[RMDB]
Annotation:
Conditions: 150 mM KOAc, 10 mM MgCl2 and 150 mM bicine (pH 8.5), 24 C. This 177-nucleotide RNA was probed chemically with DMS and 2A3. For 2A3, 5,532 sequencing reads were counted. For DMS, 3,706 sequencing reads were counted. 2A3 adducts were read by reverse transcription with SuperScript II with manganese. For DMS the reverse transcriptase was MarathonRT.
RNA sequence: GGGAACGACUCGAGUAGAGUCGAAAAACAGCACCGGCACCGUCACACGACAGGUCACGUCCGGGUCGGCUUUCACGUAGAGUUCGCGUAGGUAGUCGGCGUCGUGGACGUGGUCGCGCGUACAGCCCCAUAAUCCGAGGUUCGCCUCGGAUUAUGGAAAAGAAACAACAACAACAAC
Reactivity to DMS in 0.01 (KOAc 150mM, MgCl2 10mM, bicine 150mM(pH8.5), 24C), signal-to-noise 3, nucleotides 027 to 126: a080c120a070g020c060a100c080c030g000g010c050a050c050c060g000u010c080a080c050a070c050g000a090c070a120g030g000u010c070a040c020g000u000c010c010g000g000g010u000c000g020g000c000u000u000u000c020a040c030g020u000a140g020a150g010u010u010c080g010c010g010u000a120g010g010u010a010g010u000c000g010g000c010g020u010c060g020u020g040g000a010c010g020u000g000g000u000c020g000c060g010c030g010u000a050c090a130g030c060c030
Reactivity to 2A3 in 0.01 (KOAc 150mM, MgCl2 10mM, bicine 150mM(pH8.5), 24C), signal-to-noise 3, nucleotides 027 to 126: a000c030a020g030c040a030c050c000g000g000c000a030c040c090g080u050c030a010c020a010c140g180a060c040a090g030g020u020c000a000c020g000u000c000c000g060g010g000u010c000g020g000c010u010u090u100c010a010c010g050u090a100g050a160g300u260u270c110g000c010g000u060a170g040g050u010a000g010u020c000g000g000c000g070u080c020g110u120g010g010a000c000g000u010g000g000u010c000g020c000g000c010g000u020a030c010a030g050c000c020